[RMDB]
RNA sequence: GGGAACGACUCGAGUAGAGUCGAAAAGAUAUGGAUCGGCUGCGAUAAGACCCGGUCGGAAACGACCGAGGUCUUUUGACGCAGGAAGUCCUAAGUCAAAACACCGGACAGUUCGCUGUCCGGUGAACAUAGUUUCUGUCUUCGGACAGAAACUAUGAAAAGAAACAACAACAACAAC
Reactivity to 2A3 in 0.01 (KOAc 150mM, MgCl2 10mM, bicine 150mM(pH8.5), 24C), signal-to-noise 1, nucleotides 027 to 126: g010a000u040a010u060g010g000a010u070c060g290g030c230u010g010c000g080a130u030a300a000g010a000c050c000c010g000g020u000c000g000g060a030a060a010c020g010a000c030c000g040a030g030g010u010c040u000u010u000u020g000a010c010g020c000a020g070g010a060a000g040u000c000c000u010a040a030g050u020c020a080a000a090a130c010a000c020c010g000g020a000c020a040g010u140u220c250g000c160u000g010u000c000c000g000g000u010g000a000a020
Reactivity to DMS in 0.01 (KOAc 150mM, MgCl2 10mM, bicine 150mM(pH8.5), 24C), signal-to-noise 2, nucleotides 027 to 126: g020a040u010a280u000g000g010a000u010c300g030g030c020u010g000c010g010a130u010a020a010g000a000c000c000c010g010g040u010c000g010g000a010a050a090c020g000a000c000c000g010a050g030g010u000c000u000u000u000u000g020a160c020g010c010a020g010g000a110a080g000u000c010c000u000a030a130g010u000c020a100a110a150a230c020a010c000c000g000g000a020c010a000g020u000u000c220g010c000u030g000u000c000c000g010g010u000g000a020a080